Record summary: An RNA of 177 nucleotides, treated with 2A3 and DMS and read out base by base.

RNA sequence: GGGAACGACUCGAGUAGAGUCGAAAAGAUAUGGAUGGCUGGGCUGCUUGGAUUUAGGAUCGGAAACGAUCCUUGUCAGCAGCCAGACCAUCCUAAGUCAAAUCUGUCUAAGUUCGCUUAGACAGAACAUUCCUUGCAACUUCGGUUGCAAGGAAUGAAAAGAAACAACAACAACAAC
Reactivity to 2A3 in 0.01 (KOAc 150mM, MgCl2 10mM, bicine 150mM(pH8.5), 24C), signal-to-noise 3, nucleotides 027 to 126: g040a050u080a040u180g020g000a020u010g000g030c060u120g070g300g130c010u000g000c020u180u300g280g000a120u300u300u150a020g000g010a000u010c010g050g050a100a040a040c000g010a000u000c000c000u000u000g000u020c000a000g000c000a010g000c000c000a000g000a010c000c010a000u000c000c000u010a050a000g000u020c020a010a000a300u020c000u000g000u000c000u020a000a040g010u040u130c190g060c260u000u000a000g000a000c000a000g000a000a000
Reactivity to DMS in 0.01 (KOAc 150mM, MgCl2 10mM, bicine 150mM(pH8.5), 24C), signal-to-noise 3, nucleotides 027 to 126: g010a040u000a300u000g000g010a020u000g010g000c030u000g020g030g010c000u000g030c000u010u010g010g000a010u010u010u000a020g000g010a010u000c000g000g000a150a050a290c020g010a000u000c000c000u000u000g000u010c000a050g020c000a020g020c000c010a010g000a110c000c010a010u000c010c000u000a010a080g010u000c050a140a120a180u010c020u020g000u000c000u000a000a010g000u000u040c240g010c000u000u000a010g000a020c010a010g000a040a190

Background: It was measured as part of the RMDB library TTRDES.